[RMDB]
RNA sequence: GGGAACGACUCGAGUAGAGUCGAAAAGGGUCACCGGUCAGACGGUCCCGUCCCGAGGCGGCGAUCCGUCCGAAUGCGCGCCCCGCGAUGAUUCGCGGCGGUGCUCCGGUAGUUCGAGGAGCCCCGCGUUUUAUAGGUUCUUCGGAACCUAUAAAACAAAAGAAACAACAACAACAAC
Reactivity to 2A3 in 0.01 (KOAc 150mM, MgCl2 10mM, bicine 150mM(pH8.5), 24C), signal-to-noise 3, nucleotides 027 to 126: g040g000g010u060c040a010c020c000g000g060u100c060a030g000a080c010g000g000u020c000c000c000g020u050c020c030c000g030a300g050g030c030g020g030c090g030a050u070c020c000g010u010c010c020g060a080a040u180g080c030g000c000g020c040c000c010c000g000c000g020a050u210g050a080u150u110c000g000c000g000g040c110g000g000u000g000c000u010c000c000g040g030u050a050g070u070u080c070g030a060g010g040a050g050c000c000c000c000g060c010
Reactivity to DMS in 0.01 (KOAc 150mM, MgCl2 10mM, bicine 150mM(pH8.5), 24C), signal-to-noise 3, nucleotides 027 to 126: g000g010g000u000c120a030c010c000g010g010u000c160a050g010a070c010g010g000u000c020c000c010g000u000c020c110c170g000a130g020g020c030g000g000c190g000a030u000c020c010g010u000c030c030g010a040a070u010g000c200g000c030g010c010c010c000c000g020c000g020a040u000g000a270u000u000c000g020c010g000g000c140g040g010u000g000c010u000c020c040g010g010u010a100g010u000u000c040g000a090g000g000a240g000c050c020c000c040g010c130

This 177-nucleotide RNA was probed chemically with 2A3 and DMS.
For DMS the reverse transcriptase was MarathonRT.
The RNA was probed in 150 mM KOAc, 10 mM MgCl2 and 150 mM bicine (pH 8.5) at 24 C.
2A3 adducts were read by reverse transcription with SuperScript II with manganese.